[RMDB]
RNA sequence: GGGAACGACUCGAGUAGAGUCGAAAAUUAAACCGCGUAGAGAACGAAGCCUUGAAAAGCAGAAAGGGAGAGCUCAAGGCUUGGUUCUAGACUAGUGUCGAGUCGUUCCCACUCCCUACGCCAAAAAGCAAAUUAGAAGUUUCGACUUCUAAUUUGCAAAAGAAACAACAACAACAAC
Reactivity to DMS in 0.01 (KOAc 150mM, MgCl2 10mM, bicine 150mM(pH8.5), 24C), signal-to-noise 2, nucleotides 027 to 126: u010u000a060a100a100c100c080g000c130g030u000a090g020a100g020a000a000c000g000a020a010g010c020c000u010u000g000a120a100a160a090g010c030a070g020a080a100a030g000g000g000a040g000a260g000c040u000c000a000a000g000g020c000u000u000g010g010u000u000c000u000a080g010a000c000u000a030g020u000g030u000c000g010a010g000u000c000g020u000u000c000c000c000a050c020u000c000c000c020u000a070c140g010c080c130a030a060a060a070a070

This 177-nucleotide RNA was probed chemically with DMS. The DMS profile rests on 1,292 reads. DMS adducts were read by reverse transcription with MarathonRT. The reactions ran in a buffer of 150 mM KOAc, 10 mM MgCl2 and 150 mM bicine (pH 8.5), at 24 C.